Chemical mapping of a 177-nucleotide RNA with 2A3 and DMS. The reactions ran in a buffer of 150 mM KOAc, 10 mM MgCl2 and 150 mM bicine (pH 8.5), at 24 C. For 2A3, 9,728 sequencing reads were counted. Source: RMDB library OK2TST, as collected in RNAgym. For DMS the reverse transcriptase was MarathonRT.
RNA sequence: GGGAACGACUCGAGUAGAGUCGAAAAACUGAGUCACCUUUGGACUAUGUGAUUUUAUGCCCAAGUGAUGUUCCGUGGCUCAGCACGAAAUUAGAAUUAACUAUUAAAUUACCGCUCCACCAACAGCACGUCUUUAAGUAUUCGUACUUAAAGACGUAAAAGAAACAACAACAACAAC
Reactivity to 2A3 in 0.01 (KOAc 150mM, MgCl2 10mM, bicine 150mM(pH8.5), 24C), signal-to-noise 7, nucleotides 027 to 126: a000c000u000g000a000g000u010c010a010c020c000u050u070u090g030g000a030c040u040a090u090g130u040g080a100u040u130u080u170a080u240g010c020c010c000a020a020g150u070g090a190u160g050u200u040c050c030g010u010g010g010c010u000c020a010g020c040a010c060g080a050a050a110u120u060a080g070a100a090u130u060a140a040c030u050a070u260u110a090a130a100u080u040a050c020c020g010c020u000c010c010a070c020c010a030a040c010a030g050c040
Reactivity to DMS in 0.01 (KOAc 150mM, MgCl2 10mM, bicine 150mM(pH8.5), 24C), signal-to-noise 8, nucleotides 027 to 126: a110c020u000g000a020g020u000c010a020c020c080u000u000u010g020g010a030c030u010a110u000g010u010g010a090u010u010u010u000a050u020g010c010c000c000a030a050g020u010g010a130u010g010u000u000c040c050g030u000g010g000c020u000c000a020g010c070a070c100g010a060a070a080u000u000a080g010a110a120u010u010a070a100c040u000a100u000u000a040a040a050u010u000a050c050c050g000c030u000c020c020a060c070c040a050a070c110a080g000c160